[RMDB]
RNA sequence: GGGAACGACUCGAGUAGAGUCGAAAACUGACGCGGGUCGACCACCGUCGUUAUGCCAUACUGCGCGUUAGGUGGCACUAUUUCGCGCUGGUCAAUGCCGUGAUCCGCCUGUUUUCCUGGCGGCGGCCUAAUGACAUGGCUUCGGCCAUGUCAUUAGAAAAGAAACAACAACAACAAC
Reactivity to 2A3 in 0.01 (KOAc 150mM, MgCl2 10mM, bicine 150mM(pH8.5), 24C), signal-to-noise 4, nucleotides 027 to 126: c030u050g040a030c020g010c000g020g020g000u070c030g020a030c000c020a000c010c010g130u150c030g010u080u060a030u110g010c000c000a040u180a300c180u070g010c180g020c040g140u140u070a040g000g020u020g020g030c020a030c070u100a100u030u120u110c010g000c000g000c030u010g000g000u040c020a030a080u110g130c000c010g020u020g060a130u040c010c010g010c010c010u090g070u060u080u090u050c020c020u020g020g000c000g000g000c000g020g000c000
Reactivity to DMS in 0.01 (KOAc 150mM, MgCl2 10mM, bicine 150mM(pH8.5), 24C), signal-to-noise 4, nucleotides 027 to 126: c090u010g020a120c070g020c010g000g000g030u000c050g000a070c010c010a070c100c020g020u010c070g020u000u000a080u000g010c020c050a060u000a130c080u000g010c060g020c140g020u010u000a030g000g010u000g010g000c060a090c210u000a090u000u000u020c040g010c030g030c130u000g010g010u000c030a080a100u010g010c040c020g010u000g000a090u010c030c010g000c000c010u010g020u010u010u010u010c070c040u000g000g010c070g000g000c050g000g020c300
Chemical mapping of a 177-nucleotide RNA with 2A3 and DMS. Values are in units of 0.01, from 0 to 300, in steps of 10. For 2A3, 4,709 sequencing reads were counted.